[RMDB]
RNA sequence: GGGAACGACUCGAGUAGAGUCGAAAAGCGCACAAGUUCGCUUGUGCGCAAAGGGAAACGAGGCAGGGGCUGGGGCCAUGAGCGAUCCCAAGCCCUGGGAAAAAAGGCGAGCCUUCGGGCUCGCCAACAUAACAUGUGGGUUCGCCCACAUGUUAUGAAAAGAAACAACAACAACAAC
Reactivity to 2A3 in 0.01 (KOAc 150mM, MgCl2 10mM, bicine 150mM(pH8.5), 24C), signal-to-noise 2, nucleotides 027 to 126: g000c010g050c010a010c000a010a010g030u060u050c100g150c130u000u010g000u000g010c020g000c020a020a020a000g040g000g010a110a130a080c060g030a110g110g060c120a050g020g050g040g010c000u000g020g000g000g020c000c020a080u130g060a040g080c050g050a160u070c000c000c000a020a010g000c010c000c000u010g000g000g000a020a100a030a000a010a050g030g010c050g000a000g040c040c000u050u050c220g040g000g000c010u020c000g000c000c000a000a000
Reactivity to DMS in 0.01 (KOAc 150mM, MgCl2 10mM, bicine 150mM(pH8.5), 24C), signal-to-noise 3, nucleotides 027 to 126: g010c000g010c010a010c000a000a000g000u000u010c220g020c010u010u000g010u010g020c030g020c000a010a030a090g000g000g000a060a080a090c090g000a300g010g030c170a140g000g020g000g030c010u000g010g000g000g010c040c020a100u010g000a120g020c090g010a100u000c000c000c000a040a070g000c010c000c000u000g000g010g000a010a040a070a090a110a070g000g010c000g020a010g000c000c000u000u010c180g020g000g010c000u000c020g000c010c000a010a010

Description: Chemical mapping of a 177-nucleotide RNA with 2A3 and DMS. The reactions ran in a buffer of 150 mM KOAc, 10 mM MgCl2 and 150 mM bicine (pH 8.5), at 24 C. For DMS, 2,805 sequencing reads were counted.